[RMDB]
RNA sequence: GGGAACGACUCGAGUAGAGUCGAAAACAUCGCUGACAGCCUGGCGCAGCUGGCGCUGGGAGGGGGAGCCGUUGCAGACGAGGCAGACACAAAGGAAGCGGCCAAAUCGGGCGUGGAAGGUGGAGAGCAUUGAAGUGCUUUUCGAAGCACUUCAAUGAAAAGAAACAACAACAACAAC
Reactivity to DMS in 0.01 (KOAc 150mM, MgCl2 10mM, bicine 150mM(pH8.5), 24C), signal-to-noise 4, nucleotides 027 to 126: c080a080u010c100g010c050u010g010a120c090a120g000c010c010u000g010g020c040g020c020a200g020c110u010g020g010c020g010c010u000g020g010g000a080g000g000g020g020g010a140g020c020c010g010u000u020g020c080a070g010a100c090g000a110g000g010c040a050g010a090c100a090c110a060a080a100g000g000a140a090g010c050g000g010c030c050a030a080a090u010c090g000g000g010c080g030u020g000g000a060a060g000g000u020g020g000a100g000a110g010
Reactivity to 2A3 in 0.01 (KOAc 150mM, MgCl2 10mM, bicine 150mM(pH8.5), 24C), signal-to-noise 1, nucleotides 027 to 126: c030a090u080c050g020c110u070g070a080c060a080g020c020c000u030g020g000c000g010c020a160g090c130u210g160g020c000g010c000u030g020g010g010a030g030g010g000g000g030a010g000c000c030g050u080u100g070c070a020g030a070c030g020a030g040g000c020a010g030a060c030a000c010a110a070a070g080g010a070a000g040c000g020g030c000c000a020a090a050u120c050g010g010g000c020g020u040g010g030a110a030g010g000u030g020g000a080g000a010g050